[RMDB]
Chemical mapping of a 177-nucleotide RNA with DMS and 2A3. The 2A3 profile rests on 1,004 reads. The DMS profile rests on 731 reads.
RNA sequence: GGGAACGACUCGAGUAGAGUCGAAAAUGAUAUAAUCUGCAUCCGACAACGAUCACCAACUUCCACCUUGAUCGAUUGGUCGCAUAAUCCAUUAAAUUUGGAAGUAGUCGCUCAUGCUUACCACUACAGCAUAGCGUGGUUUCGACCACGCUAUGCUAAAAGAAACAACAACAACAAC
Reactivity to DMS in 0.01 (KOAc 150mM, MgCl2 10mM, bicine 150mM(pH8.5), 24C), signal-to-noise 1, nucleotides 027 to 126: u000g000a060u070a130u010a160a110u000c000u050g000c300a000u130c000c000g010a120c050a130a060c090g000a000u040c000a060c130c180a000a040c060u000u000c000c020a050c240c110u000u000g000a000u000c240g000a110u000u000g000g000u000c160g010c060a070u010a160a110u020c020c070a000u000u020a010a020a170u000u090u000g000g000a010a040g000u000a010g040u000c000g000c070u010c190a090u050g000c000u010u100a130c000c000a000c060u000a190c290
Reactivity to 2A3 in 0.01 (KOAc 150mM, MgCl2 10mM, bicine 150mM(pH8.5), 24C), signal-to-noise 2, nucleotides 027 to 126: u080g000a010u020a000u030a300a100u160c080u060g000c050a020u000c010c000g050a010c000a160a000c070g000a000u090c010a000c090c000a090a010c010u060u020c000c010a050c000c010u000u070g030a030u050c000g080a100u000u010g080g020u040c020g010c010a040u030a030a040u070c030c000a030u010u220a060a020a290u060u070u070g000g000a000a000g000u010a030g120u030c020g010c020u000c040a020u030g090c030u030u120a080c010c040a020c060u130a120c100